Chemical mapping of a 207-nucleotide RNA with 2A3 and DMS. For 2A3 the reverse transcriptase was SuperScript II with manganese. The data come from the RNA Mapping Database (RMDB), library OK3TST. Conditions: 150 mM KOAc, 10 mM MgCl2 and 150 mM bicine (pH 8.5), 24 C. For DMS the reverse transcriptase was MarathonRT.
RNA sequence: GGGAACGACUCGAGUAGAGUCGAAAAGGUUUUCUAUUUUAGGACCAGGACAUUAUCAGGCACACUGUAAUGGAUUGAUUGCCCUACCUUUAGUCUUGAACUUCUUCCUCAUCAAAAUGAUUGUCAGGAAUAUGAACACAUAGCCAGAUAUGCUGUAAGUAAAAUUAUCCUUCGGGAUAAUUUUACUAAAAGAAACAACAACAACAAC
Reactivity to 2A3 in 0.01 (KOAc 150mM, MgCl2 10mM, bicine 150mM(pH8.5), 24C), signal-to-noise 3, nucleotides 027 to 156: g040g000u070u060u050u130c010u140a260u060u160u160u220a050g000g010a040c030c030a020g000g040a010c010a050u090u120a050u250c010a020g040g000c060a030c030a010c100u030g040u110a050a010u070g030g060a050u060u050g030a080u020u140g030c010c010c010u040a090c040c020u100u060u070a060g050u100c040u000u130g010a090a030c010u090u060c000u030u000c040c020u060c010a070u040c010a120a190a140a080u140g060a060u080u200g060u110c050a020g040g090a000a050u070a060u110g090a150a000c020a000c010a130u060a020g020c020c010a040g030a080u020a000u080g010c040u030g040u060a010
Reactivity to DMS in 0.01 (KOAc 150mM, MgCl2 10mM, bicine 150mM(pH8.5), 24C), signal-to-noise 1, nucleotides 027 to 156: g000g010u000u000u000u000c030u020a190u030u010u000u000a040g000g010a060c060c050a100g030g000a170c020a020u020u000a030u000c030a070g000g000c100a080c030a070c050u010g000u000a040a080u000g020g000a150u000u000g000a090u000u000g030c010c020c010u000a080c030c040u000u010u010a040g030u000c050u020u000g000a050a120c030u000u000c060u000u000c010c000u000c010a060u010c020a070a070a150a130u010g000a090u010u000g030u000c050a070g000g000a080a100u010a070u010g010a080a080c080a020c010a060u000a110g020c030c090a130g040a170u010a030u010g060c030u010g020u020a140